RNA sequence: GGGAACGACUCGAGUAGAGUCGAAAAGAAAGAAAGAAAGAGAUCACAAGAGGGUCACCGUUCAACCCACCACACUGAGAAUGUCUAUAAUCUUUCUCUGCUUCAGUUUCAUUAUUAGUAAAUAAAUUGUGACCUCAACAUAUUAUGGUAUAUCCAACUCCUGAUUACGGUUCGCCGUAAUCAGGAGAAAAGAAACAACAACAACAAC
Reactivity to 2A3 in 0.01 (KOAc 150mM, MgCl2 10mM, bicine 150mM(pH8.5), 24C), signal-to-noise 1, nucleotides 027 to 156: g010a000a060a000g000a020a040a000g100a000a090a000g070a030g010a040u100c030a000c020a110a000g010a060g100g000g030u030c010a010c140c030g010u110u020c100a000a170c030c040c030a040c240c000a040c090a040c040u010g000a000g000a020a020u030g030u010c000u040a220u090a190a140u200c000u000u060u000c010u000c000u030g030c020u120u140c010a110g000u080u100u000c060a000u010u300a030u090u120a070g030u090a150a090a300u190a030a060a030u070u010g000u010g000a000c000c000u030c000a100a100c040a000u130a060u130u220a040u160g090g030u150a190u030a010u260c030c000a020a050
Background
This 207-nucleotide RNA was probed chemically with 2A3. The data come from the RNA Mapping Database (RMDB), library OK3TST.